[RMDB]
RNA sequence: GGGAACGACUCGAGUAGAGUCGAAAAAAAGAUAUGGACCAUAUGGAGAAGGAACUGCCGUUGAAAGAGCCUCGGAAACGAGGCUCUGGAGGCAUAGUACUUCGUUGAAAUAUGGUCCUAAGUCAAACUUGAAGCAUAUGUUCGCAUAUGCUUCAAGAAAAGAAACAACAACAACAAC
Reactivity to DMS in 0.01 (KOAc 150mM, MgCl2 10mM, bicine 150mM(pH8.5), 24C), signal-to-noise 2, nucleotides 027 to 126: a100a070a050g010a040u000a300u000g000g010a010c000c000a010u010a010u020g010g000a110g010a040a010g020g010a210a160c160u000g010c000c030g010u000u020g000a170a100a010g010a030g020c000c000u000c000g020g000a110a050a170c000g020a010g010g020c010u000c000u010g000g000a040g010g000c000a000u000a020g010u000a150c000u000u000c010g010u010u020g010a130a140a010u010a000u000g010g000u000c000c010u010a000a070g000u000c030a080a090a140

An RNA of 177 nucleotides, treated with DMS and read out base by base. The RNA was probed in 150 mM KOAc, 10 mM MgCl2 and 150 mM bicine (pH 8.5) at 24 C. Reactivities are rounded to 0.1 and cut off at 0 and 3. It was measured as part of the RMDB library TTRDES.